[RMDB]
Chemical mapping of a 207-nucleotide RNA with DMS and 2A3.
It was measured as part of the RMDB library M2RFPK.

RNA sequence: GGGAACGACUCGAGUAGAGUCGAAAAACGAUAACGAGGCGCUCGCUAUUGCUGCGUAACUGACGGGCUGACGGUCUGACGUUACAAAGCUAAAGCGCGGUUGGACCCCACCGGGCAACAGAAGGGGAAAGGCGACCCCGUUUCGACGGGGUCGCAACUUAGAGUAUGUGUUCGCACAUACUCUAAGAAAAGAAACAACAACAACAAC
Reactivity to DMS in 0.01 (KOAc 150mM, MgCl2 10mM, bicine 150mM(pH8.5), 24C), signal-to-noise 1, nucleotides 027 to 156: a050c030g020a250u010a060a070c020g000a050g010g000c030g000c000u000c000g000c000u000a240u000u000g020c030u000g010c300g000u000a020a020c080u020g050a300c230g040g010g010c040u000g030a150c130g040g000u000c010u020g020a190c100g020u000u000a080c000a090a240a050g000c030u000a070a080a040g010c010g000c000g030g040u000u000g020g000a130c020c000c000c010a070c020c020g010g000g000c130a120a260c050a100g020a060a120g000g030g030g000a040a040a150g000g000c000g000a080c020c000c030c020g000u010u010u010c230g020a080c000g000g000g010g000u000c000g020c110a000a010
Reactivity to 2A3 in 0.01 (KOAc 150mM, MgCl2 10mM, bicine 150mM(pH8.5), 24C), signal-to-noise 3, nucleotides 027 to 156: a000c050g010a060u150a080a030c050g010a040g110g010c070g040c080u090c050g000c020u080a100u200u180g010c000u010g000c010g000u000a010a000c020u080g080a020c040g020g000g000c000u110g160a070c170g090g000u020c050u070g010a030c030g000u000u010a010c000a020a020a000g000c000u010a050a070a010g000c000g000c020g000g000u040u110g150g080a030c000c050c010c000a000c000c020g070g200g000c000a030a010c000a030g010a020a010g030g010g000g000a090a040a020g070g000c000g000a010c000c000c000c040g030u060u080u100c200g040a050c000g000g020g000g000u000c000g000c010a000a000

Background
Conditions: 150 mM KOAc, 10 mM MgCl2 and 150 mM bicine (pH 8.5), 24 C. For DMS the reverse transcriptase was MarathonRT. The 2A3 profile rests on 2,152 reads. The DMS profile rests on 2,005 reads.